Record summary
An RNA of 177 nucleotides, treated with 2A3 and DMS and read out base by base. Values cover nucleotides 27 to 126. 2A3 adducts were read by reverse transcription with SuperScript II with manganese. DMS adducts were read by reverse transcription with MarathonRT. It was measured as part of the RMDB library OK1LIB.
RNA sequence: GGGAACGACUCGAGUAGAGUCGAAAAGUUCAAAGAGUGGUGUUACAACCUACAACAAUAAUACAGGUGUCGCAAACUAUAACGAUAAAAAUGAAAAAUAUCAUUAUAAAAACCUGUCCGAAGAUGAUCAGACGAGGUAAUUCGUUACCUCGUCUGAAAAAGAAACAACAACAACAAC
Reactivity to 2A3 in 0.01 (KOAc 150mM, MgCl2 10mM, bicine 150mM(pH8.5), 24C), signal-to-noise 1, nucleotides 027 to 126: g000u000u120c020a180a000a000g220a050g150u090g000g000u030g030u090u060a030c090a010a000c060c030u180a030c030a200a020c000a050a140u300a300a000u150a220c000a000g040g030u000g020u170c040g140c180a000a130a000c080u040a040u000a160a000c020g050a020u010a040a100a220a070a090u240g030a040a030a300a000a000u040a030u010c000a020u000u070a000u030a150a100a000a000a000c000c060u010g120u000c000c070g060a040a000g020a250u100g010a000
Reactivity to DMS in 0.01 (KOAc 150mM, MgCl2 10mM, bicine 150mM(pH8.5), 24C), signal-to-noise 1, nucleotides 027 to 126: g040u000u000c090a020a060a090g000a080g040u000g000g010u000g040u000u050a150c070a140a050c050c000u010a160c210a080a090c140a030a160u080a210a080u110a010c000a010g000g010u030g000u000c110g130c150a010a090a100c280u000a010u060a000a040c010g060a030u000a000a000a000a020a300u010g000a090a000a070a020a220u000a000u000c000a010u000u000a000u020a000a080a130a020a030c000c010u000g000u000c080c020g000a070a030g020a020u020g030a140